Source: RMDB library OK2TRN, as collected in RNAgym. Structure probing data (DMS and 2A3) for a 177-nucleotide construct. For DMS the reverse transcriptase was MarathonRT. High 2A3 reactivity points to a flexible backbone, as in loops and unpaired stretches. The 2A3 profile rests on 4,732 reads. Conditions: 150 mM KOAc, 10 mM MgCl2 and 150 mM bicine (pH 8.5), 24 C.
[RMDB]
RNA sequence: GGGAACGACUCGAGUAGAGUCGAAAAGAUGGUCUUACUCAUAUUAAAUGGGAUAGUAAUAAUGAAGUUAUAACCAUUGAGUUAGAACGUGCUUCUAAGUUUUUAGUAGAUAGACCAAAUGGCACACUGGUAAUAUUAUGUUCGCAUAAUAUUACCAAAAAGAAACAACAACAACAAC
Reactivity to DMS in 0.01 (KOAc 150mM, MgCl2 10mM, bicine 150mM(pH8.5), 24C), signal-to-noise 9, nucleotides 027 to 126: g020a180u000g000g010u000c020u000u000a160c030u000c040a110u000a100u000u010a060a060a050u000g000g000g000a120u010a090g010u000a030a040u000a080a120u010g000a130a120g010u000u000a040u000a080a110c010c010a080u000u000g010a100g010u000u000a020g000a040a050c100g020u000g010c060u000u000c020u000a050a080g000u010u000u000u000u000a060g010u000a030g000a210u000a030g010a050c010c020a030a050a120u000g010g010c070a040c100a090c230
Reactivity to 2A3 in 0.01 (KOAc 150mM, MgCl2 10mM, bicine 150mM(pH8.5), 24C), signal-to-noise 4, nucleotides 027 to 126: g040a060u080g020g020u010c010u010u060a030c000u020c030a030u090a080u170u300a100a120a030u040g010g000g050a050u080a130g100u030a060a050u060a090a130u180g110a180a040g010u050u070a050u040a090a050c000c020a050u010u140g010a080g090u030u030a010g010a050a020c050g050u040g020c040u020u000c020u030a100a190g030u060u010u040u080u110a060g030u030a030g040a190u040a020g010a020c000c000a040a040a030u060g050g040c030a010c020a010c130